Structure probing data (DMS) for a 177-nucleotide construct. DMS (dimethyl sulfate) methylates the pairing face of unpaired adenines and cytosines. The DMS profile rests on 848 reads. DMS adducts were read by reverse transcription with MarathonRT. It was measured as part of the RMDB library M2PK90. The RNA was probed in 150 mM KOAc, 10 mM MgCl2 and 150 mM bicine (pH 8.5) at 24 C.
[RMDB]
RNA sequence: GGGAACGACUCGAGUAGAGUCGAAAAAAAAAGAACUGUUAUGUUAGACAAACAUUGAAAACACUCCAACAACUCUAGUUGAAGCAAUAGCCACCUAAUGUACAAUAUGCUUAUUACAGACCAAAAAUCUAAUGCUAAGGUUCGCCUUAGCAUUAGAAAAAGAAACAACAACAACAAC
Reactivity to DMS in 0.01 (KOAc 150mM, MgCl2 10mM, bicine 150mM(pH8.5), 24C), signal-to-noise 1, nucleotides 027 to 126: a040a050a040a020a090g000a060a060c170u000g020u000u020a060u000g000u000u000a040g000a070c100a110a040a040c030a050u000u050g010a020a030a050a090c070a050c030u000c020c010a010a040c060a060a120c100u010c150u010a160g010u000u030g000a050a030g000c020a070a030u000a130g000c020c050a030c090c020u000a040a020u010g040u000a040c060a050a050u000a050u000g000c030u000u000a100u010u000a040c080a070g000a110c040c050a020a050a030a060a100